Chemical mapping of a 177-nucleotide RNA with 2A3 and DMS. For 2A3 the reverse transcriptase was SuperScript II with manganese. The RNA was probed in 150 mM KOAc, 10 mM MgCl2 and 150 mM bicine (pH 8.5) at 24 C. Source: RMDB libraries RFM100 and RFMREP, as collected in RNAgym.
RNA sequence: GGGAACGACUCGAGUAGAGUCGAAAAAGCCUCUCCGGGAAUCCAAUGCGCCUUCCUCUUGAACGCCUUUCAACGCGCGUGCUGUGCGUGAAAACGCGUUUAGGAGGAAGGUGUAUUGAUUUCCGGGUGGGAACAUGUAAUUCGUUACAUGUUCCCAAAAAGAAACAACAACAACAAC
Reactivity to 2A3 in 0.01 (KOAc 150mM, MgCl2 10mM, bicine 150mM(pH8.5), 24C), signal-to-noise 6, nucleotides 027 to 126: a010g070c000c000u040c010u010c000c000g000g000g000a010a000u030c090c030a030a000u010g000c000g010c000c000u010u000c010c000u000c000u000u000g000a000a000c000g010c000c010u030u010u010c100a210a130c010g010c010g020c020g070u210g200c180u300g020u010g010c000g010u000g000a000a000a010a010c040g000c000g000u000u000u010a010g000g000a000g000g000a000a000g000g000u000g000u000a000u000u000g000a000u000u000u000c000c000g000g000g000
Reactivity to DMS in 0.01 (KOAc 150mM, MgCl2 10mM, bicine 150mM(pH8.5), 24C), signal-to-noise 2, nucleotides 027 to 126: a130g000c050c000u010c160u050c010c010g000g000g000a010a000u000c090c110a000a010u000g000c000g000c010c000u000u000c000c000u000c010u000u000g000a000a000c000g020c000c070u000u000u000c030a080a080c000g000c000g000c000g020u030g020c160u060g050u010g000c000g010u000g000a020a010a010a040c300g000c000g010u000u000u000a010g000g010a030g000g000a010a000g000g000u000g000u000a000u000u000g000a010u010u000u000c010c010g010g000g010